RNA sequence: GGGAACGACUCGAGUAGAGUCGAAAAGUAUUACCGCAAUACAUGGAACUUGGCCUUUCGAUGGGACGUCGGUACGUGCAACGCACGAUCGCAAGUAUCCCGGAAGAAGCCCUUACGGAGAUGCGAAGGCUAAAGGGAUCUUCGGAUCCCUUUAGCCAAAAGAAACAACAACAACAAC
Reactivity to DMS in 0.01 (KOAc 150mM, MgCl2 10mM, bicine 150mM(pH8.5), 24C), signal-to-noise 1, nucleotides 027 to 126: g030u000a000u000u030a220c010c000g000c040a000a010u000a000c110a110u070g050g040a080a170c020u000u040g000g000c010c120u000u000u000c000g000a300u000g000g000g000a000c120g010u000c000g000g060u000a100c000g090u000g000c000a080a060c080g000c000a120c010g000a000u000c000g020c090a190a150g000u030a080u000c000c000c000g000g000a140a010g000a080a170g000c190c180c040u000u000a130c060g000g000a040g020a030u000g060c000g000a130a030
Reactivity to 2A3 in 0.01 (KOAc 150mM, MgCl2 10mM, bicine 150mM(pH8.5), 24C), signal-to-noise 2, nucleotides 027 to 126: g100u080a150u160u210a190c000c010g040c000a000a000u010a050c030a090u120g040g000a050a020c020u010u000g020g000c010c020u050u070u000c030g060a100u090g000g000g000a000c000g040u270c000g020g000u050a250c000g010u010g050c060a270a040c090g000c000a010c010g000a000u010c000g000c000a100a000g000u080a180u040c000c000c080g070g000a000a010g000a020a000g030c020c030c000u020u020a010c010g070g000a090g000a100u020g100c000g000a060a020